Source: RMDB libraries RFM100 and RFMREP, as collected in RNAgym. An RNA of 177 nucleotides, treated with DMS and 2A3 and read out base by base. Reactivities are given for positions 27 through 126. Reactivities are rounded to 0.1 and cut off at 0 and 3.

RNA sequence: GGGAACGACUCGAGUAGAGUCGAAAAAAGUGGAUGGACAACAGGUUAAUAUUCCUGUACUACCUUAUACUGCGAUGGAGGGACGGAGAAGUGAAAGCAACACGUACGGACAGAAGUGUACGUCUAACACUUAGACUACUUUCGAGUAGUCUAAGUGAAAAGAAACAACAACAACAAC
Reactivity to DMS in 0.01 (KOAc 150mM, MgCl2 10mM, bicine 150mM(pH8.5), 24C), signal-to-noise 9, nucleotides 027 to 126: a050a040g020u010g000g000a100u010g010g000a070c170a120a050c030a020g000g010u010u000a110a110u020a180u020u010c010c010u000g010u000a100c140u010a080c060c020u000u010a110u020a100c080u010g010c070g000a070u010g000g010a060g000g000g000a060c090g000g000a040g010a060a070g020u010g000a070a060a090g010c100a060a070c120a060c050g010u000a060c050g010g000a070c110a080g000a060a090g010u010g010u010a040c070g010u000c070u000a050a170
Reactivity to 2A3 in 0.01 (KOAc 150mM, MgCl2 10mM, bicine 150mM(pH8.5), 24C), signal-to-noise 9, nucleotides 027 to 126: a000a000g090u070g000g030a090u040g010g010a020c030a070a000c010a080g020g030u060u060a130a040u070a150u190u080c000c000u000g010u010a040c010u040a020c000c000u070u050a070u060a110c060u070g050c030g040a030u070g020g010a030g010g010g010a020c040g040g020a060g010a100a030g040u060g070a100a050a000g050c020a020a040c030a010c070g030u060a010c020g030g080a020c030a080g140a150a020g090u050g010u080a020c020g020u000c020u050a050a010